[RMDB]
RNA sequence: GGGAACGACUCGAGUAGAGUCGAAAAUAGACCCAGCGAUGAUACCAACAAUCACUGUUAGGUGAGCGACCAUAAUAAUGUGCCGCUUUAGGUGGAAAGAGCAGCAAAUCACCAGGGUUACUGUAAAUAUGUAUCUUAUCUUCGGAUAAGAUACAUAAAAAGAAACAACAACAACAAC
Reactivity to 2A3 in 0.01 (KOAc 150mM, MgCl2 10mM, bicine 150mM(pH8.5), 24C), signal-to-noise 6, nucleotides 027 to 126: u080a020g070a040c010c000c000a000g040c040g080a070u090g010a020u080a100c020c010a050a050c050a060a080u110c040a030c090u040g050u170u090a070g000g040u030g020a020g000c030g020a030c020c020a070u070a190a050u160a100a050u210g080u140g040c000c010g000c000u030u040u100a060g000g030u030g010g020a150a100a020g040a020g010c030a000g000c000a030a020a110u070c030a030c030c020a010g060g000g000u060u050a040c030u080g050u120a010a120a110
Reactivity to DMS in 0.01 (KOAc 150mM, MgCl2 10mM, bicine 150mM(pH8.5), 24C), signal-to-noise 9, nucleotides 027 to 126: u010a130g010a160c020c010c010a080g010c070g010a060u000g010a120u000a080c070c070a080a110c130a080a110u000c050a050c060u010g000u000u010a070g010g010u010g000a040g010c040g010a040c030c030a030u000a110a110u010a070a080u010g010u010g020c020c020g010c020u000u000u000a070g020g020u000g000g010a060a070a080g010a070g010c050a030g010c040a030a070a070u000c060a070c080c040a090g000g010g010u000u000a060c080u000g010u000a040a060a120
An RNA of 177 nucleotides, treated with 2A3 and DMS and read out base by base.
2A3 adducts were read by reverse transcription with SuperScript II with manganese.
The RNA was probed in 150 mM KOAc, 10 mM MgCl2 and 150 mM bicine (pH 8.5) at 24 C.